Source: RMDB library M2RFPK, as collected in RNAgym. Chemical mapping of a 207-nucleotide RNA with 2A3 and DMS. 2A3 adducts were read by reverse transcription with SuperScript II with manganese. For 2A3, 1,579 sequencing reads were counted. For DMS the reverse transcriptase was MarathonRT.
[RMDB]
RNA sequence: GGGAACGACUCGAGUAGAGUCGAAAAACAGCGAAAGGCACAAGAAUUCGAACAUUAUAGCAGUUAGUAGUUGCCUAAACCCAUUGCAAUAUAUGGGACAGUAGAGGUCGCAAGCCUAUACUGUGCGAAAAGUCGCAAGGUUUCGACCUUGCGACAAGGUUACGCAUACGUUCGCGUAUGCGUAACCAAAAGAAACAACAACAACAAC
Reactivity to 2A3 in 0.01 (KOAc 150mM, MgCl2 10mM, bicine 150mM(pH8.5), 24C), signal-to-noise 2, nucleotides 027 to 156: a000c070a010g010c020g040a120a040a000g030g030c010a000c020a050a110g170a130a060u160u130c120g040a070a020c070a040u130u170a130u230a100g120c080a030g030u040u120a030g020u040a020g000u100u020g000c030c000u020a040a030a040c010c000c010a010u020u010g000c020a010a000u010a000u010a010u080g000g000g000a000c000a000g000u000a000g000a010g010g020u060c040g020c280a060a000g020c010c000u000a000u000a000c000u000g020u040g010c000g070a000a000a080a050g000u000c000g000c000a000a000g010g010u040u100u060c090g020a030c000c000u000u000g000c000g000a000c000a000a010
Reactivity to DMS in 0.01 (KOAc 150mM, MgCl2 10mM, bicine 150mM(pH8.5), 24C), signal-to-noise 1, nucleotides 027 to 156: a020c100a160g000c020g000a040a050a050g010g000c000a090c030a050a160g050a030a160u000u000c020g000a090a080c030a140u010u060a140u000a070g020c020a070g000u000u000a020g010u000a130g010u000u000g020c100c050u000a060a050a150c030c000c000a050u000u000g030c080a060a170u000a100u020a010u040g000g020g010a030c010a000g010u010a000g020a020g060g020u010c080g070c280a110a240g020c010c000u000a010u000a010c000u030g000u000g010c090g000a030a070a050a150g020u010c000g010c000a000a040g030g030u020u000u000c300g000a070c000c000u000u000g030c000g000a000c000a010a020